[RMDB]
RNA sequence: GGGAACGACUCGAGUAGAGUCGAAAAGCGGCCAGGUCAUUGCGGAACCGGCUGACAUUCCGUCGGUGGGCCGGUUCGCCGUGUUGUCCGAUCCGCAGGGCGCGAUCUUCAGUGUGUUGAAGCCCGCGUACAAGUUUCAGUUCGCUGAAACUUGUACAAAAGAAACAACAACAACAAC
Reactivity to 2A3 in 0.01 (KOAc 150mM, MgCl2 10mM, bicine 150mM(pH8.5), 24C), signal-to-noise 1, nucleotides 027 to 126: g000c000g000g000c030c030a050g010g040u030c000a000u000u180g030c010g020g000a020a010c000c000g000g000c030u030g130a020c000a050u250u180c130c070g070u060c030g060g110u170g030g020g010c000c000g020g020u030u040c030g050c040c000g010u020g060u070u050g000u000c000c010g000a030u020c020c030g010c030a030g020g000g010c050g000c040g060a050u000c020u060u010c140a220g020u120g030u030g050u300u000g010a050a030g000c010c020c000g030c040
Reactivity to DMS in 0.01 (KOAc 150mM, MgCl2 10mM, bicine 150mM(pH8.5), 24C), signal-to-noise 3, nucleotides 027 to 126: g020c020g010g010c120c050a260g010g000u000c010a040u000u000g010c000g000g000a090a020c010c000g010g010c010u000g000a040c040a130u000u000c100c130g010u010c080g010g000u000g000g000g020c000c010g010g010u010u000c140g020c040c060g010u000g010u000u010g000u000c010c010g000a190u010c010c010g000c010a110g000g010g000c030g000c020g010a090u000c010u010u000c080a090g000u000g020u010g000u010u010g010a040a140g010c060c050c000g020c090